[RMDB]
Structure probing data (2A3 and DMS) for a 177-nucleotide construct. High 2A3 reactivity points to a flexible backbone, as in loops and unpaired stretches. The reactions ran in a buffer of 150 mM KOAc, 10 mM MgCl2 and 150 mM bicine (pH 8.5), at 24 C.
RNA sequence: GGGAACGACUCGAGUAGAGUCGAAAACUUCGCAACUUCGGUUGCGAAGAAUGGCAGCUCGUCCCGGCGCUGGGUUCGCCGGGUAAUAAAACAUAACACAUCACUGGCUACCAUUCGUGGUAGCCAAGGAUAAGGAUCAUUUCGAUGAUCCUUAUCCAAAAGAAACAACAACAACAAC
Reactivity to 2A3 in 0.01 (KOAc 150mM, MgCl2 10mM, bicine 150mM(pH8.5), 24C), signal-to-noise 3, nucleotides 027 to 126: c000u010u000c010g000c010a000a000c010u040u060c220g140g000u000u000g010c000g000a000a000g010a000a000u040g030g020c050a050g020c030u020c030g080u110c010c000c000g000g000c020g010c070u140g070g050g020u090u050c020g000c000c030g010g020g000u020a050a020u110a030a020a010a010c080a080u170a080a030c050a010c000a090u130c040a040c160u030g010g000c000u010a000c010c000a010u010u070c240g090u040g000g000u000a000g000c000c000a000a000
Reactivity to DMS in 0.01 (KOAc 150mM, MgCl2 10mM, bicine 150mM(pH8.5), 24C), signal-to-noise 6, nucleotides 027 to 126: c010u000u000c000g000c000a010a010c000u000u010c200g030g010u000u000g010c000g000a010a000g010a040a050u000g000g020c150a100g010c040u010c040g010u010c000c000c010g000g010c010g010c140u000g000g000g010u000u000c010g010c000c000g010g000g010u000a010a010u010a020a020a030a050c200a090u010a030a020c060a040c070a080u030c150a140c210u000g000g000c000u000a010c000c000a050u000u010c200g020u010g010g010u000a000g000c000c010a000a010